Chemical mapping of a 207-nucleotide RNA with 2A3 and DMS.
Values cover nucleotides 27 to 156.
Conditions: 150 mM KOAc, 10 mM MgCl2 and 150 mM bicine (pH 8.5), 24 C.
RNA sequence: GGGAACGACUCGAGUAGAGUCGAAAAAUCAAAGUGGUUGAACUUUGAGCUUGGCUUAGCUAGUUGGGUCUGUAGACACCGCACCUGGCUUGCCCGUUCCAAGUCGAGAGUGGGUUCAUGUUUCCUGAGCGAAGGCUCGGGUGAUGUGAGCUUUAGAUCAGUACUCAUACUUCGGUAUGAGUACUGAAAAAGAAACAACAACAACAAC
Reactivity to 2A3 in 0.01 (KOAc 150mM, MgCl2 10mM, bicine 150mM(pH8.5), 24C), signal-to-noise 2, nucleotides 027 to 156: a030u050c020a030a000a000g020u040g090g080u050u100g030a050a020c000u040u000u010g000a000g010c010u030u050g020g000c030u090u190a010g000c020u010a000g000u000u040g040g000g000u000c070u090g090u080a080g050a150c090a050c080c090g060c010a030c000c000u010g000g010c000u000u020g000c000c040c010g140u080u080c000c010a020a010g020u040c070g050a010g010a020g180u140g030g040g000u000u000c000a000u010g010u010u000u020c000c000u010g000a000g000c050g100a220a110g160g000c010u000c000g010g000g010u020g010a000u020g000u000g010a000g000c000u070u060u020a070g000a080
Reactivity to DMS in 0.01 (KOAc 150mM, MgCl2 10mM, bicine 150mM(pH8.5), 24C), signal-to-noise 2, nucleotides 027 to 156: a120u000c010a010a040a040g040u000g010g000u000u010g040a100a050c000u000u000u000g000a080g030c080u000u020g000g020c070u000u000a080g040c020u000a050g000u020u010g000g040g010u000c040u020g020u020a130g000a210c120a100c070c040g030c080a050c050c020u000g020g010c010u000u060g050c020c030c140g050u030u010c090c030a020a110g030u000c030g010a090g030a170g010u000g010g000g010u000u010c010a020u000g010u000u000u000c000c000u000g000a040g020c000g000a200a150g050g020c000u010c000g000g000g000u000g020a030u000g030u000g000a030g010c000u000u000u000a080g010a180
It was measured as part of the RMDB library ARCHII.